RNA sequence: GGGAACGACUCGAGUAGAGUCGAAAAUCGGCUGUGGCCGAGAUCGACGCAGCACUCCCUCAGCCUGAAACCAAGGAGACGAAAUGAACGUCGUUGAACCCCGCCUGCGUCCGCAGGAAUAUGGCCGUGCCAACUACCUCAAGCGGGAGGUCGAGCAAUACUACUCUGGGUUCGCCCAGAGUAGUAUAAAAGAAACAACAACAACAAC
Reactivity to DMS in 0.01 (KOAc 150mM, MgCl2 10mM, bicine 150mM(pH8.5), 24C), signal-to-noise 1, nucleotides 027 to 156: u000c030g020g020c010u010g030u010g000g060c010c010g040a080g000a080u010c040g010a050c010g060c000a130g010c030a090c070u000c000c000c040u000c060a070g030c020c010u000g000a230a120a110c070c020a060a070g000g010a250g030a120c050g060a070a090a170u010g000a170a170c150g000u010c010g000u020u010g010a060a090c080c010c000c050g000c020c000u020g110c020g020u000c120c070g030c050a040g010g020a100a090u000a050u000g040g010c000c020g000u010g010c000c030a090a080c030u000a050c000c020u030c040a070a060g010c100g000g020g000a070g000g000u010c010g010a070g000c070a100
Reactivity to 2A3 in 0.01 (KOAc 150mM, MgCl2 10mM, bicine 150mM(pH8.5), 24C), signal-to-noise 2, nucleotides 027 to 156: u040c020g010g000c030u100g030u130g300g000c080c090g030a030g020a010u090c010g020a000c000g000c060a030g030c030a040c090u010c020c000c000u040c020a020g000c000c020u030g100a090a060a040c040c000a030a080g040g020a030g030a040c030g030a100a090a050u180g020a060a110c020g010u010c000g000u030u090g060a110a110c000c030c000c030g000c000c000u000g020c000g090u080c030c120g000c040a010g000g110a040a040u190a090u110g070g000c030c010g010u020g000c030c020a080a060c020u050a060c000c020u030c030a090a040g080c100g000g120g000a030g030g000u020c020g010a060g070c010a040
Background
The data come from the RNA Mapping Database (RMDB), library OK3TST. This 207-nucleotide RNA was probed chemically with DMS and 2A3. DMS adducts were read by reverse transcription with MarathonRT. Values are in units of 0.01, from 0 to 300, in steps of 10. For 2A3, 969 sequencing reads were counted. The RNA was probed in 150 mM KOAc, 10 mM MgCl2 and 150 mM bicine (pH 8.5) at 24 C.